[RMDB]
RNA sequence: GGGAACGACUCGAGUAGAGUCGAAAAGAAAUACGGUGCCGGAUAACGUCCGGCGGGGGCGACCCCAGGGAAAGUGCCACAGAGAGCAAACCGCCAUGCCUUGCAUGGUAAGGGUGAAAGGGUGGGGGAAGCUUACAAGAUUCGUCUUGUAAGCUUCAAAAGAAACAACAACAACAAC
Reactivity to 2A3 in 0.01 (KOAc 150mM, MgCl2 10mM, bicine 150mM(pH8.5), 24C), signal-to-noise 6, nucleotides 027 to 126: g030a000a050a010u250a050c050g030g040u090g000c000c000g000g020a030u060a140a100c100g120u000c000c000g010g000c010g000g000g000g000g000c010g010a090c000c000c000c010a010g010g000g020a050a180a040g040u070g060c020c020a050c060a050g110a010g000a010g060c020a030a040a050c010c010g000c010c000a000u010g000c000c150u100u300g010c000a000u000g000g010u070a060a100g030g000g000u070g010a070a040a020g050g000g020u240g010g000g000g010
Reactivity to DMS in 0.01 (KOAc 150mM, MgCl2 10mM, bicine 150mM(pH8.5), 24C), signal-to-noise 7, nucleotides 027 to 126: g010a100a070a090u020a090c140g020g010u000g030c000c000g000g000a020u010a120a100c180g020u000c000c010g000g010c000g010g000g010g000g010c230g000a160c030c010c000c030a100g010g010g000a110a080a090g010u010g000c020c020a080c100a140g010a110g000a130g020c050a020a080a040c020c020g000c010c010a010u000g000c000c170u020u030g000c010a020u000g000g010u000a030a050g010g010g000u010g000a080a060a120g000g000g000u020g000g010g000g010

Conditions: 150 mM KOAc, 10 mM MgCl2 and 150 mM bicine (pH 8.5), 24 C. The record gives the reactivity of an RNA of 177 nucleotides to 2A3 and DMS.